[RMDB]
RNA sequence: GGGAACGACUCGAGUAGAGUCGAAAAGAUAUGGAAAUCCUGGGACAUGACUAUGUGUCGGAAACGACACAAGGUCAACAGCCCAGAUUUCCUAAGUCAAAUGAGAUCUCUCUUCGGAGAGAUCUCAGACAUAAAGACUGUUCGCAGUCUUUAUGUCAAAAGAAACAACAACAACAAC
Reactivity to 2A3 in 0.01 (KOAc 150mM, MgCl2 10mM, bicine 150mM(pH8.5), 24C), signal-to-noise 8, nucleotides 027 to 126: g000a000u010a000u030g010g040a010a010a000u100c090c100u040g000g000g020a050c180a300u300g000a000c040u020a040u090g000u000g010u000c000g000g010a020a010a000c010g000a000c000a000c000a010a040g020g000u010c040a090a040c110a100g000c000c000c000a000g000a000u000u000u000c000c000u000a000a000g000u000c020a030a100a280u150g000a000g010a000u000c000u000c000u000c010u080u130c300g070g000a000g000a000g000a000u000c000u000c000a000
Reactivity to DMS in 0.01 (KOAc 150mM, MgCl2 10mM, bicine 150mM(pH8.5), 24C), signal-to-noise 7, nucleotides 027 to 126: g010a000u000a030u020g000g000a010a010a010u000c280c110u000g010g010g010a030c060a230u010g020a000c010u010a300u000g010u010g010u000c010g010g000a010a010a030c000g010a020c000a000c000a010a300g010g000u000c000a090a050c200a110g000c000c000c000a000g000a020u000u000u000c000c000u000a000a060g000u000c010a100a120a220u010g000a010g000a010u000c000u000c000u000c000u000u020c200g020g000a010g000a010g010a000u000c000u000c000a010
Notes: The record gives the reactivity of an RNA of 177 nucleotides to 2A3 and DMS. Values are in units of 0.01, from 0 to 300, in steps of 10. The reactions ran in a buffer of 150 mM KOAc, 10 mM MgCl2 and 150 mM bicine (pH 8.5), at 24 C. The DMS profile rests on 10,861 reads.